[RMDB]
RNA sequence: GGGAACGACUCGAGUAGAGUCGAAAAUAACCACUGUACAAAGCAGUGCUGAACGCACAGAAGUCAGCAGAGGUCAUAGUAGCCGAAAGGUGAAGGACAAAGGGCUGAAACGUUCGCGUUUCAGCCCCCUAGGUUCAGAGUUCGCUCUGAACCUAGGAAAAGAAACAACAACAACAAC
Reactivity to DMS in 0.01 (KOAc 150mM, MgCl2 10mM, bicine 150mM(pH8.5), 24C), signal-to-noise 1, nucleotides 027 to 126: u020a050a200c000c020a260c020u000g010u000a050c090a060a110a180g020c060a060g010u000g000c030u010g010a100a160c090g000c080a020c150a130g030a090a160g000u000c020a020g020c080a060g000a150g020g020u010c030a010u000a030g010u010a230g000c000c020g020a050a050a080g020g030u000g000a080a210g000g000a070c010a030a090a130g010g010g000c000u000g000a000a000a000c010g010u010u020c270g020c030g030u000u000u000c010a020g010c000c000c000
Reactivity to 2A3 in 0.01 (KOAc 150mM, MgCl2 10mM, bicine 150mM(pH8.5), 24C), signal-to-noise 1, nucleotides 027 to 126: u090a010a020c010c010a010c030u010g030u080a110c130a100a170a070g000c030a060g090u010g050c020u050g070a110a010c040g020c110a040c020a200g140a180a000g070u010c010a000g000c000a010g060a010g170g000u000c000a000u030a090g000u020a000g030c000c010g050a070a000a000g030g000u030g030a050a000g100g000a020c040a070a110a030g010g000g010c000u000g000a000a010a000c020g010u070u070c250g010c000g100u010u000u020c000a010g040c000c010c010